[RMDB]
RNA sequence: GGGAACGACUCGAGUAGAGUCGAAAAACGGUGCUUACGAGCACCGAAUACUUUCAAAAAGCAAAAAGUUGCAAUAUCGGUUUACGACGUUACGUAGAUAUUGCACUAAUUUGCUUUUGAAAGUGAAUGCGUCAUGUAAAUUCGUUUACAUGACGCAAAAAGAAACAACAACAACAAC
Reactivity to DMS in 0.01 (KOAc 150mM, MgCl2 10mM, bicine 150mM(pH8.5), 24C), signal-to-noise 3, nucleotides 027 to 126: a110c020g000g000u000g020c010u000u010a120c240g020a030g040c000a000c000c010g000a040a020u010a030c000u000u000u000c000a010a000a030a030a040g000c000a000a010a030a140a070g000u020u010g010c000a010a000u000a010u000c000g010g000u020u050u000a030c010g040a250c300g000u010u030a040c010g000u010a060g000a010u000a010u000u000g000c010a000c000u010a050a080u010u010u000g000c000u000u020u020u000g000a010a000a000g010u000g000a090a110
Reactivity to 2A3 in 0.01 (KOAc 150mM, MgCl2 10mM, bicine 150mM(pH8.5), 24C), signal-to-noise 7, nucleotides 027 to 126: a010c020g000g000u010g010c000u060u060a060c270g070a010g010c010a000c000c000g000a000a000u030a000c000u000u000u000c010a040a030a010a020a010g000c000a010a000a000a010a030g130u240u040g000c000a000a000u010a010u010c060g060g120u130u200u100a070c130g080a040c140g130u200u160a050c030g020u050a010g000a000u000a000u000u000g000c000a000c000u000a000a000u010u000u010g000c000u000u000u000u000g000a010a000a000g000u010g040a050a050
Annotation: The record gives the reactivity of an RNA of 177 nucleotides to DMS and 2A3. Reactivities are given for positions 27 through 126. DMS adducts were read by reverse transcription with MarathonRT. It was measured as part of the RMDB libraries RFM100 and RFMREP. 2A3 adducts were read by reverse transcription with SuperScript II with manganese.